This 207-nucleotide RNA was probed chemically with 2A3 and DMS.
RNA sequence: GGGAACGACUCGAGUAGAGUCGAAAAUGAUCAUUUCCACGUUGUUUGCCCAUCCGUAAUGUCUUCUUAGUACUGCGUCAGCUUUCUCGUACGUUGUGAAAAUUACCUUAGCGUCAAUAUUUUCGGGGUCUUCGUCAUAAACUUCGCUUGUUAGUGCCUUCCAUACCGAUUUCGAUCGGUAUGGAAGAAAAGAAACAACAACAACAAC
Reactivity to 2A3 in 0.01 (KOAc 150mM, MgCl2 10mM, bicine 150mM(pH8.5), 24C), signal-to-noise 2, nucleotides 027 to 156: u170g020a050u050c020a040u020u040u000c030c000a000c020g000u000u040g000u000u080u100g060c000c010c000a040u090c030c000g070u070a050a120u140g020u080c010u080u010c010u000u170a020g000u040a090c010u060g040c020g050u050c030a060g000c000u020u050u070c040u050c070g000u060a040c030g050u030u060g020u070g070a070a050a050a070u170u080a070c000c070u040u060a010g030c040g040u020c080a080a110u010a110u140u010u050u130c040g000g000g000g000u000c000u060u020c020g060u010c020a040u150a130a070a040c050u100u090c030g120c110u070u070g030u080u040a050g000u020g080c040
Reactivity to DMS in 0.01 (KOAc 150mM, MgCl2 10mM, bicine 150mM(pH8.5), 24C), signal-to-noise 2, nucleotides 027 to 156: u030g020a180u010c070a130u010u000u000c020c040a250c300g000u000u010g000u000u000u010g010c010c000c020a120u000c040c060g020u000a080a100u010g010u000c070u020u000c060u000u010a140g030u010a060c060u010g020c020g000u000c050a070g000c060u000u000u000c040u010c040g040u000a110c080g020u000u000g010u000g000a060a040a090a110u000u000a090c040c040u010u000a120g020c020g000u000c040a050a070u000a170u000u010u000u000c070g000g010g020g030u000c040u010u000c030g000u010c030a090u000a040a050a070c050u000u000c010g000c050u010u030g010u000u010a080g020u020g000c130
The reactions ran in a buffer of 150 mM KOAc, 10 mM MgCl2 and 150 mM bicine (pH 8.5), at 24 C.